Source information:
Chemical mapping of a 177-nucleotide RNA with DMS and 2A3. Conditions: 150 mM KOAc, 10 mM MgCl2 and 150 mM bicine (pH 8.5), 24 C. For DMS, 2,361 sequencing reads were counted. For DMS the reverse transcriptase was MarathonRT. For 2A3 the reverse transcriptase was SuperScript II with manganese. Values cover nucleotides 27 to 126.
[RMDB]
RNA sequence: GGGAACGACUCGAGUAGAGUCGAAAAACGCGCGAUUCAGUUCCUCUUCACAUAAUCGCCCCGAGCUCGCUUAUCGUUUAAGCAGCUCUGCGCUACUAUGGGUCCCGUGUAGAGGCUAAUCCAUUAGCAUCUUCGUAUCCUUCGGGAUACGAAGAUGAAAAGAAACAACAACAACAAC
Reactivity to DMS in 0.01 (KOAc 150mM, MgCl2 10mM, bicine 150mM(pH8.5), 24C), signal-to-noise 2, nucleotides 027 to 126: a130c120g030c140g050c030g030a020u040u010c180a160g000u010u020c040c000u000c000u010u030c030a090c100a070u010a030a060u000c110g020c000c100c030c160g010a020g010c010u000c190g040c000u000u000a000u020c300g030u000u040u000a010a000g020c010a020g010c000u000c000u000g030c300g050c010u000a110c080u000a020u030g000g000g020u000c060c010c010g000u020g010u020a020g010a040g040g050c120u000a000a010u000c050c050a100u020u060a050g000
Reactivity to 2A3 in 0.01 (KOAc 150mM, MgCl2 10mM, bicine 150mM(pH8.5), 24C), signal-to-noise 8, nucleotides 027 to 126: a000c080g080c010g020c060g030a010u070u040c130a030g060u150u160c010c010u000c010u060u080c010a030c000a100u170a150a050u100c050g010c000c010c010c040g010a010g010c020u060c170g010c010u100u020a040u180c110g300u210u160u030a020a000g000c000a010g000c000u000c010u010g000c030g010c030u140a110c020u040a080u110g130g010g000u060c040c010c020g010u030g010u020a010g000a020g010g000c010u020a020a020u020c040c060a140u130u120a050g030